[RMDB]
RNA sequence: GGGAACGACUCGAGUAGAGUCGAAAAUCUUCCAUUCCAAAGGAUCUUAGUGAGCGCUGUGGCGGACAGUUUCCAAGCAGGUCGUUAUCCUCAGCUGUCUAGUGCUGCGUAUGGAGCUGCCAGAGCCUACUCGUGCAGAGUUCGCUCUGCACGAGUAAAAAGAAACAACAACAACAAC
Reactivity to DMS in 0.01 (KOAc 150mM, MgCl2 10mM, bicine 150mM(pH8.5), 24C), signal-to-noise 2, nucleotides 027 to 126: u020c110u010u000c020c060a100u000u000c040c040a080a160a130g000g000a020u010c060u000u020a110g020u020g000a100g010c070g000c040u000g000u030g000g000c030g010g010a030c050a030g010u010u000u000c060c070a070a180g000c150a080g030g020u000c100g000u000u000a090u010c050c000u000c050a080g030c060u000g000u000c050u010a100g040u000g010c000u000g020c080g010u030a070u000g010g010a070g020c050u000g020c070c030a050g010a040g000c020c030
Reactivity to 2A3 in 0.01 (KOAc 150mM, MgCl2 10mM, bicine 150mM(pH8.5), 24C), signal-to-noise 1, nucleotides 027 to 126: u020c020u110u030c050c000a100u100u000c060c070a210a010a060g030g010a010u030c010u100u150a080g000u090g210a040g020c040g010c020u040g020u000g150g010c000g040g010a020c030a060g000u050u090u040c040c010a020a060g000c030a030g020g120u100c060g170u090u070a120u150c000c000u040c070a000g000c020u010g070u050c040u060a030g020u020g070c020u020g030c000g020u010a080u120g020g030a070g030c060u000g000c070c030a020g020a000g050c000c000
The data come from the RNA Mapping Database (RMDB), library OK2TRN. Chemical mapping of a 177-nucleotide RNA with DMS and 2A3. 2A3 adducts were read by reverse transcription with SuperScript II with manganese. Values cover nucleotides 27 to 126. For 2A3, 830 sequencing reads were counted. For DMS the reverse transcriptase was MarathonRT. The DMS profile rests on 1,798 reads.